Source: RMDB library M2RFPK, as collected in RNAgym. Structure probing data (DMS and 2A3) for a 207-nucleotide construct. The reactions ran in a buffer of 150 mM KOAc, 10 mM MgCl2 and 150 mM bicine (pH 8.5), at 24 C.

[RMDB]
RNA sequence: GGGAACGACUCGAGUAGAGUCGAAAACGUAAAGGGCGAGCUUUUGUCCGGAAUGGUUCCGCCAUGAUCGGGCCAUGCAAUAGUUGCCAACGACAACUAUGCUCCGGUUGCUCAGGCAGCGUAACGCACAAUGGAACAACCUUCGGGUUGUUCCAAAGACGAUACAAAUGUUCGCAUUUGUAUCGUCAAAAGAAACAACAACAACAAC
Reactivity to DMS in 0.01 (KOAc 150mM, MgCl2 10mM, bicine 150mM(pH8.5), 24C), signal-to-noise 2, nucleotides 027 to 156: c050g020u000a040a050a140g010g010g040c020g010a090g030c080u000u000u000u000g030u010c030c010g020g020a120a080u000g010g020u000u000c070c010g060c070c070a240u010g000a130u000c020g000g010g010c000c030a060u000g020c020a080a090u000a020g010u000u000g020c010c040a130a180c240g020a210c000a010a020c000u000a040u000g000c050u000c050c040g000g000u000u010g000c000u020c030a070g020g030c020a060g000c060g010u010a050a080c070g020c010a160c110a130a230u010g000g010a000a080c000a010a010c000c000u000u000c300g020g010g030u000u000g000u000u000c000c000a000a050a070
Reactivity to 2A3 in 0.01 (KOAc 150mM, MgCl2 10mM, bicine 150mM(pH8.5), 24C), signal-to-noise 5, nucleotides 027 to 156: c020g020u090a060a050a090g060g040g000c030g020a070g010c050u080u090u140u150g090u050c000c010g000g010a050a030u050g010g010u300u300c010c050g000c040c060a270u230g050a170u120c010g000g020g000c010c000a020u060g010c010a050a270u000a030g000u000u010g010c040c070a100a050c100g060a110c010a000a000c010u000a000u050g030c020u030c000c000g000g030u030u100g020c010u010c040a020g080g000c020a030g030c010g060u100a070a040c050g030c030a040c060a090a170u110g000g000a000a000c000a000a000c000c020u060u080c110g020g000g000u000u000g000u000u000c000c000a000a000a000

Overview:
DMS adducts were read by reverse transcription with MarathonRT.